[RMDB]
RNA sequence: GGGAACGACUCGAGUAGAGUCGAAAAAACUAGUGACAUGAAACAAGCUCCAAACAUGCGCGCACGCCAGCUCUUUCCAUCCUGGGCAUCGUAUUAUCUACUGGUCCAGUCAAUGCAUUACGGUGAGCUAUUGCCUAAAAUUCGUUUUAGGCAAUAGAAAAGAAACAACAACAACAAC
Reactivity to 2A3 in 0.01 (KOAc 150mM, MgCl2 10mM, bicine 150mM(pH8.5), 24C), signal-to-noise 5, nucleotides 027 to 126: a000a010c070u080a020g030u020g070a050c030a070u090g090a060a030a030c050a090a040g010c010u020c040c020a030a100a090c030a040u080g000c040g000c000g000c040a020c040g030c020c020a020g010c020u000c010u040u030u040c020c010a030u050c020c000u030g010g030g000c010a040u060c040g010u030a040u100u050a070u140c040u040a030c020u060g030g030u020c030c000a010g020u040c030a010a070u090g030c030a010u040u100a060c050g090g010u050g030a010g000
Reactivity to DMS in 0.01 (KOAc 150mM, MgCl2 10mM, bicine 150mM(pH8.5), 24C), signal-to-noise 9, nucleotides 027 to 126: a070a060c070u000a050g020u000g010a090c050a060u000g000a110a080a080c110a080a090g000c040u000c020c030a070a090a090c110a050u000g010c050g010c070g000c070a060c090g010c040c040a060g010c050u000c030u000u000u000c030c030a070u010c090c020u000g010g010g000c020a040u000c060g010u000a040u000u010a070u010c230u000a050c050u010g010g010u000c040c030a040g000u000c100a060a060u000g010c080a060u000u010a050c090g010g020u000g010a110g010
Structure probing data (2A3 and DMS) for a 177-nucleotide construct. DMS adducts were read by reverse transcription with MarathonRT. Source: RMDB library OK2TST, as collected in RNAgym. Values cover nucleotides 27 to 126. Conditions: 150 mM KOAc, 10 mM MgCl2 and 150 mM bicine (pH 8.5), 24 C. As a SHAPE reagent, 2A3 marks flexible, mostly unpaired nucleotides at the ribose 2'-OH. Values are in units of 0.01, from 0 to 300, in steps of 10.